This 177-nucleotide RNA was probed chemically with 2A3 and DMS. The data come from the RNA Mapping Database (RMDB), library OK2TRN. The 2A3 profile rests on 3,414 reads. 2A3 is a SHAPE reagent: it acylates the 2'-hydroxyl of flexible nucleotides of all four kinds. For DMS the reverse transcriptase was MarathonRT. Conditions: 150 mM KOAc, 10 mM MgCl2 and 150 mM bicine (pH 8.5), 24 C. For DMS, 6,071 sequencing reads were counted.

[RMDB]
RNA sequence: GGGAACGACUCGAGUAGAGUCGAAAAUGCCGCAGUACGGCCGCAUAGUCGUGUCCGGGCAGCUCCAGGUGCUGUGGCUCGGCGCCGUGGCCAUACAGCACAGCGGGUAUCUUGCCGGCGCGCCGGGCCAAGUACGCCCAUUCGUGGGCGUACUUGGAAAAGAAACAACAACAACAAC
Reactivity to 2A3 in 0.01 (KOAc 150mM, MgCl2 10mM, bicine 150mM(pH8.5), 24C), signal-to-noise 3, nucleotides 027 to 126: u070g040c000c000g010c010a010g050u100a030c020g010g030c030c020g050c090a200u210a170g050u170c020g010u030g080u040c020c000g020g050g000c020a010g020c020u040c050c040a110g180g090u040g000c010u050g050u140g050g000c010u000c030g060g010c050g000c080c060g040u060g020g000c020c000a030u090a020c010a010g040c030a020c020a100g070c070g080g010g000u060a060u060c110u080u160g070c050c030g130g030c060g010c000g000c050c010g010g020g000
Reactivity to DMS in 0.01 (KOAc 150mM, MgCl2 10mM, bicine 150mM(pH8.5), 24C), signal-to-noise 3, nucleotides 027 to 126: u010g020c010c030g030c070a120g010u000a110c040g000g000c020c050g000c100a120u010a090g010u010c020g020u000g010u000c030c020g030g010g000c020a060g010c090u010c060c100a130g010g020u010g010c010u000g020u010g010g010c010u000c020g010g010c040g020c080c060g020u000g000g000c000c300a090u000a060c020a040g020c030a090c100a160g010c070g010g000g000u000a040u000c120u000u010g010c010c000g010g000c100g020c060g020c000c020g000g010g000
Source information: 2A3 adducts were read by reverse transcription with SuperScript II with manganese.